[RMDB]
RNA sequence: GGGAACGACUCGAGUAGAGUCGAAAAGUUAACUCGUUGAGGGUAGUAUCUAGUCGGGAUAAACUACGGCAUCGGAACUAAAAGAGAGUUAACCUUAUACUAAGUAGCUCAUAGAAUAAUCGGUAGACACGUACUAAUCGUUCGCGAUUAGUACGUGAAAAGAAACAACAACAACAAC
Reactivity to DMS in 0.01 (KOAc 150mM, MgCl2 10mM, bicine 150mM(pH8.5), 24C), signal-to-noise 2, nucleotides 027 to 126: g000u000u000a010a000c030u010c010g010u010u010g020a180g010g020g030u000a000g000u010a090u000c020u000a180g000u010c000g000g040g000a070u000a060a110a130c240u090a020c020g010g000c000a060u010c210g020g000a070a070c010u000a010a020a030a040g000a050g000a000g020u000u010a010a020c030c030u000u000a100u000a130c070u000a060a050g010u000a080g030c000u000c060a090u000a050g000a030a080u010a070a140u000c090g010g020u010a090g010a300
Reactivity to 2A3 in 0.01 (KOAc 150mM, MgCl2 10mM, bicine 150mM(pH8.5), 24C), signal-to-noise 1, nucleotides 027 to 126: g000u010u010a000a010c010u020c000g100u120u050g040a050g030g040g010u000a000g000u010a220u100c030u010a010g010u020c020g020g000g060a060u110a080a130a040c030u150a040c040g020g000c020a070u080c090g030g010a010a020c020u040a080a030a030a000g040a000g000a000g000u010u000a000a000c010c000u060u140a090u040a030c080u050a110a100g050u070a010g110c020u000c070a060u070a080g110a110a070u130a130a060u110c020g000g020u030a020g040a080
This 177-nucleotide RNA was probed chemically with DMS and 2A3. The reactions ran in a buffer of 150 mM KOAc, 10 mM MgCl2 and 150 mM bicine (pH 8.5), at 24 C. Source: RMDB library RFMREP, as collected in RNAgym. 2A3 adducts were read by reverse transcription with SuperScript II with manganese. Reactivities are given for positions 27 through 126. High 2A3 reactivity points to a flexible backbone, as in loops and unpaired stretches.